[RMDB]
Structure probing data (DMS and 2A3) for a 207-nucleotide construct. The reactions ran in a buffer of 150 mM KOAc, 10 mM MgCl2 and 150 mM bicine (pH 8.5), at 24 C. Source: RMDB library OK3TST, as collected in RNAgym. Values cover nucleotides 27 to 156.

RNA sequence: GGGAACGACUCGAGUAGAGUCGAAAACUCGCGCGAACAUUGAGGCGUGGAGCGCGACAUGAAUCAGCCUCCAUUAGAUUAAUGGUCGACAGAUCAGCGGCGAUCAGCGACCCAAUUAGAAGCCGCCACCGGAAGAGGAGACGCUCGACGGACGUCAGAUUAGGAGUACCUUCGGGUACUCCUAAUCAAAAGAAACAACAACAACAAC
Reactivity to DMS in 0.01 (KOAc 150mM, MgCl2 10mM, bicine 150mM(pH8.5), 24C), signal-to-noise 1, nucleotides 027 to 156: c000u010c050g000c040g010c030g000a160a100c060a180u000u000g010a080g000g040c090g000u000g000g030a270g050c050g040c000g010a150c090a080u080g020a090a160u000c060a120g000c010c010u020c020c050a090u000u000a050g030a160u010u000a050a050u000g000g000u000c000g010a200c090a110g000a030u000c060a160g030c060g000g000c040g000a050u010c050a090g020c000g050a140c000c000c060a040a100u000u000a130g000a210a060g040c020c010g000c000c000a170c100c000g030g010a100a090g000a130g040g000a200g030a020c000g050c060u000c030g010a130c030g020g000a050c010g000u000c010a090
Reactivity to 2A3 in 0.01 (KOAc 150mM, MgCl2 10mM, bicine 150mM(pH8.5), 24C), signal-to-noise 3, nucleotides 027 to 156: c020u010c000g040c000g000c000g000a230a010c010a030u050u080g000a000g010g020c030g000u040g000g000a050g010c060g000c000g010a000c030a120u200g060a080a140u120c090a090g000c000c000u000c040c000a100u120u160a050g130a170u080u170a160a080u140g000g000u020c000g010a040c070a070g000a020u000c010a020g030c020g010g000c000g010a010u000c010a010g020c010g010a010c000c040c010a030a130u200u190a100g070a190a030g000c010c000g020c000c000a010c020c010g050g000a070a000g000a040g030g030a120g040a070c060g050c110u010c020g060a060c020g040g010a090c010g040u040c080a020
2A3 adducts were read by reverse transcription with SuperScript II with manganese. The DMS profile rests on 1,452 reads.